[RMDB]
RNA sequence: GGGAACGACUCGAGUAGAGUCGAAAAGAUAUGGAGCAUGAACUACAUGAAAUCCUACCUUCGCGACGAAGAAUUUCGGAAACGAAAUUCAGAGCGAAGCGUAGGAUUUCAUGCAUGCUCCUAAGUCCUAUAUUCCUAUCUUCGGAUAGGAAUAUAGAAAAGAAACAACAACAACAAC
Reactivity to 2A3 in 0.01 (KOAc 150mM, MgCl2 10mM, bicine 150mM(pH8.5), 24C), signal-to-noise 2, nucleotides 027 to 126: g040a020u140a090u270g000g000a000g050c010a010u000g020a110a100c070u230a060c300a000u000g000a010a000a020u000c000c000u000a020c000c020u020u000c010g070c070g270a300c050g020a180a100g010a030a050u000u030u020c010g010g050a100a080a120c000g020a000a010a010u010u000c000a010g010a000g020c000g000a010a000g000c030g000u000a000g000g000a000u000u000u000c010a000u000g000c010a000u010g000c000u030c000c000u010a010a000g010u010c000
Reactivity to DMS in 0.01 (KOAc 150mM, MgCl2 10mM, bicine 150mM(pH8.5), 24C), signal-to-noise 6, nucleotides 027 to 126: g010a090u010a300u000g010g000a020g010c010a000u000g000a110a030c100u010a300c000a000u000g000a010a010a010u000c000c000u000a000c000c000u000u000c000g020c000g010a200c300g000a110a100g010a020a010u000u000u000c000g010g000a130a110a210c000g000a000a010a010u000u000c000a020g000a150g010c000g000a000a000g010c300g020u000a010g000g000a000u000u000u000c000a010u000g000c000a000u000g000c000u000c000c000u000a010a080g010u000c030